[RMDB]
RNA sequence: GGGAACGACUCGAGUAGAGUCGAAAAGUGGAUAUCCUCUGUAACCGGAGGGCAAAACACAAGAUGAGCGAUUGACGAGCUCGUUCGUUUAACGAAUAGUGUAGGGGAGAGUAAGAAGCCAUCCCAUUAUGUUACACGUGUUCGCACGUGUAACAUAAAAAGAAACAACAACAACAAC
Reactivity to 2A3 in 0.01 (KOAc 150mM, MgCl2 10mM, bicine 150mM(pH8.5), 24C), signal-to-noise 4, nucleotides 027 to 126: g040u030g000g000a050u040a070u100c010c010u020c010u040g030u080a160a060c090c080g000g020a010g000g020g000c020a010a060a090a010c000a010c040a040a040g090a150u120g010a010g020c030g080a100u080u150g110a120c050g030a030g010c020u000c020g000u020u000c000g000u030u060u140a220a040c010g020a060a070u010a060g050u080g080u070a040g000g010g060g000a110g020a020g010u050a080a040g060a120a010g000c000c000a030u030c000c000c000a000u020
Reactivity to DMS in 0.01 (KOAc 150mM, MgCl2 10mM, bicine 150mM(pH8.5), 24C), signal-to-noise 2, nucleotides 027 to 126: g010u010g000g000a080u020a100u020c020c000u010c000u010g010u020a110a170c300c030g020g000a090g000g000g000c140a030a070a140a070c010a040c000a030a180g000a090u000g010a020g000c020g010a160u000u040g010a080c130g000a210g010c080u000c000g000u000u000c040g010u000u000u010a070a110c060g000a080a030u010a080g040u010g010u000a040g020g000g000g040a140g000a100g000u000a080a040g000a090a130g000c050c010a080u000c000c020c010a220u000